[RMDB]
RNA sequence: GGGAACGACUCGAGUAGAGUCGAAAAACGGUCGUACGCGACCGAGGCGCGGCUAGGUCGACGGACCGAACAAUGGCAUCCCGCAUUCUGCCAUCCGCCACGCAGCUUCUUCUCAAACGGUGCGGAAAAAAGUAGGACACCUUCGGGUGUCCUACAAGGUAUCGUGAAACUUCGGUUUCACGAUACCAAAAGAAACAACAACAACAAC
Reactivity to 2A3 in 0.01 (KOAc 150mM, MgCl2 10mM, bicine 150mM(pH8.5), 24C), signal-to-noise 1, nucleotides 027 to 156: a030c020g000g000u000c010g020u080a070c280g010c020g090a000c000c000g000a040g000g000c000g010c010g000g000c000u000a020g000g000u030c030g130a160c200g220g020a000c000c000g000a010a010c050a030a000u000g000g010c010a040u070c010c000c010g030c030a050u300u060c010u020g000c000c010a000u020c010c000g000c030c010a030c050g000c010a070g000c060u130u030c010u080u030c000u080c070a090a110a040c080g000g000u000g010c000g000g000a070a050a000a000a000a050g000u010a000g010g000a000c010a010c000c030u040u150c210g090g010g000u000g000u000c000c000u000a000c000a000a000